[RMDB]
RNA sequence: GGGAACGACUCGAGUAGAGUCGAAAAAUCGAAUACUUCGGUAUUCGAUCAAGGGCUGUUUUUCUCGCUGAGUUUCAGCCCCAAACAAAAAAUGUCAGCAAAUUCCAUACUCAUUCGUGAGUAUGAAGCUCUACAAUUAGUUCGCUAAUUGUAGAGCAAAAGAAACAACAACAACAAC
Reactivity to 2A3 in 0.01 (KOAc 150mM, MgCl2 10mM, bicine 150mM(pH8.5), 24C), signal-to-noise 4, nucleotides 027 to 126: a000u020c000g000a000a000u000a000c010u000u040c110g090g000u000a000u000u000c000g000a010u020c030a090a110g010g000g000c000u000g010u010u010u000u030u030c140u080c130g000c000u010g010a010g010u010u000u010c000a000g000c000c000c010c090a010a020a010c010a010a010a000a010a010a000u130g120u050c010a000g010c010a010a020a020u070u010c020c000a000u000a000c000u010c010a020u050u070c190g090u020g020a010g010u010a000u000g000a010a030
Reactivity to DMS in 0.01 (KOAc 150mM, MgCl2 10mM, bicine 150mM(pH8.5), 24C), signal-to-noise 3, nucleotides 027 to 126: a030u000c000g000a020a000u010a000c010u010u010c180g040g010u000a000u000u000c000g000a000u000c110a110a110g000g000g000c000u000g000u000u000u000u000u000c040u010c160g000c010u010g010a080g000u000u000u000c000a000g010c000c000c000c140a010a000a160c030a000a000a000a000a000a010u000g000u000c000a000g040c010a030a160a140u000u010c080c000a010u000a000c000u000c000a030u010u010c180g020u000g010a010g000u000a000u000g010a090a070